Source: RMDB libraries RFM100 and RFMREP, as collected in RNAgym. Structure probing data (2A3 and DMS) for a 177-nucleotide construct. High 2A3 reactivity points to a flexible backbone, as in loops and unpaired stretches. The 2A3 profile rests on 394 reads. 2A3 adducts were read by reverse transcription with SuperScript II with manganese.
[RMDB]
RNA sequence: GGGAACGACUCGAGUAGAGUCGAAAAAUUUCACUGGUGUUAUUACAAGCAUUAUUGAUUUAAUCAAGACUUGCAUUCAGGCUUUCGGUUAAUUUUUUCAACUAAAAAACAGAGGAAAUAUUCAACGUUAUGUGGUAUUCUUCGGAAUACCACAUAAAAAAGAAACAACAACAACAAC
Reactivity to 2A3 in 0.01 (KOAc 150mM, MgCl2 10mM, bicine 150mM(pH8.5), 24C), signal-to-noise 2, nucleotides 027 to 126: a000u000u000u010c050a020c030u000g050g050u000g050u070u050a120u180u210a060c160a080a020g000c000a010u060u060a080u050u190g000a050u040u090u210a070a020u120c040a040a020g100a190c000u000u010g010c030a220u010u300c070a050g000g100c000u070u080u160c060g000g030u030u100a000a160u000u070u060u000u010u020c010a090a070c090u170a100a090a000a020a000a020c040a000g080a020g070g100a010a020a100u160a110u100u230c080a060a060c050g070
Reactivity to DMS in 0.01 (KOAc 150mM, MgCl2 10mM, bicine 150mM(pH8.5), 24C), signal-to-noise 2, nucleotides 027 to 126: a050u010u000u000c040a040c060u010g010g000u020g000u010u010a040u040u030a090c210a120a120g000c090a060u020u000a110u000u000g020a020u010u000u030a050a090u000c010a050a060g010a100c080u000u000g010c100a130u040u000c070a180g030g010c040u000u000u010c040g010g000u000u000a010a060u000u020u020u000u000u010c070a030a120c120u110a000a020a070a100a050a060c120a020g000a090g000g000a030a040a030u000a060u000u000c000a010a190c260g000